Background
Structure probing data (2A3 and DMS) for a 207-nucleotide construct. It was measured as part of the RMDB library OK3TST. Reactivities are given for positions 27 through 156. 2A3 adducts were read by reverse transcription with SuperScript II with manganese. For 2A3, 1,417 sequencing reads were counted. For DMS, 1,542 sequencing reads were counted.

RNA sequence: GGGAACGACUCGAGUAGAGUCGAAAAUGAAUAAUGGCUAAAUACGAAGUCAUCGCACGAGGCAUCUUUGUAAAAGAAAAGGGUAAGAUUCGUGAAUUGCAGCUUGGCGAGGUUAUCACUGAGCCAGCUGAACAUCUGAUGUCAAAGCUGCGCGUAACUUCACGCUUUCUUUCGAGAAAGCGUGAAGAAAAGAAACAACAACAACAAC
Reactivity to 2A3 in 0.01 (KOAc 150mM, MgCl2 10mM, bicine 150mM(pH8.5), 24C), signal-to-noise 3, nucleotides 027 to 156: u160g010a010a070u140a070a020u070g010g020c020u070a090a190a010u230a110c130g070a070a000g010u010c010a030u030c030g000c010a010c010g010a010g000g020c010a010u000c010u060u100u070g120u170a120a160a000a090g120a010a090a040a010g110g100g020u090a110a050g060a190u090u140c100g010u050g110a040a060u120u240g010c020a010g010c050u130u240g010g000c030g000a000g010g000u070u160a110u300c110a020c010u010g010a020g010c000c020a000g000c010u010g000a000a010c010a010u020c030u070g010a010u010g010u040c000a000a050a050g060c090u020g000c020g000c040g030u050a030a030
Reactivity to DMS in 0.01 (KOAc 150mM, MgCl2 10mM, bicine 150mM(pH8.5), 24C), signal-to-noise 1, nucleotides 027 to 156: u070g000a180a040u000a030a030u020g030g050c060u000a200a070a200u000a060c090g050a180a100g010u010c020a060u000c020g040c060a130c050g010a200g000g030c030a100u000c020u050u000u010g000u000a090a070a160a300g030a040a090a150a140g050g000g030u000a050a120g000a100u000u010c090g030u000g000a120a080u000u000g010c010a070g000c000u020u040g110g030c000g000a300g060g010u000u000a050u030c150a080c000u000g000a300g000c000c000a090g000c000u020g000a040a070c060a020u010c040u000g010a050u000g000u000c000a130a050a080g000c030u000g020c020g020c110g010u000a050a160